[RMDB]
RNA sequence: GGGAACGACUCGAGUAGAGUCGAAAACAGAUUUAAUGAUGGUAGCUGGUAAAGAAGUUGAAAAUGCGAUUCAACGUAUCACACAAAUGGCACGUGCAGCAGGUAUACAUUUGAUUGUAGCAACACACUUGAUUGCAAAGUUCGCUUUGCAAUCAAGAAAAGAAACAACAACAACAAC
Reactivity to 2A3 in 0.01 (KOAc 150mM, MgCl2 10mM, bicine 150mM(pH8.5), 24C), signal-to-noise 2, nucleotides 027 to 126: c000a010g060a060u090u130u220a170a090u110g040a020u060g000g030u020a020g010c000u000g020g020u030a050a040a080g100a080a050g010u040u030g060a060a060a030a050u150g060c030g030a000u000u060c020a000a000c000g030u100a030u100c030a030c010a000c020a050a050a120u090g010g010c010a000c000g020u020g000c010a000g000c020a000g080g030u060a080u020a070c050a030u070u070u040g170a180u070u060g080u000a010g030c040a030a010c030a000c030a030
Reactivity to DMS in 0.01 (KOAc 150mM, MgCl2 10mM, bicine 150mM(pH8.5), 24C), signal-to-noise 3, nucleotides 027 to 126: c070a100g000a150u010u010u000a080a090u000g010a050u010g000g000u000a050g000c040u000g010g010u000a060a080a110g020a060a160g010u000u010g000a040a030a080a100u010g030c090g020a110u000u000c030a060a060c060g020u000a040u000c080a050c080a080c120a040a090a110u010g020g000c050a040c080g030u000g000c040a030g010c050a030g010g000u000a060u000a000c050a030u000u000u010g010a100u010u010g020u000a030g010c090a040a030c110a060c150a130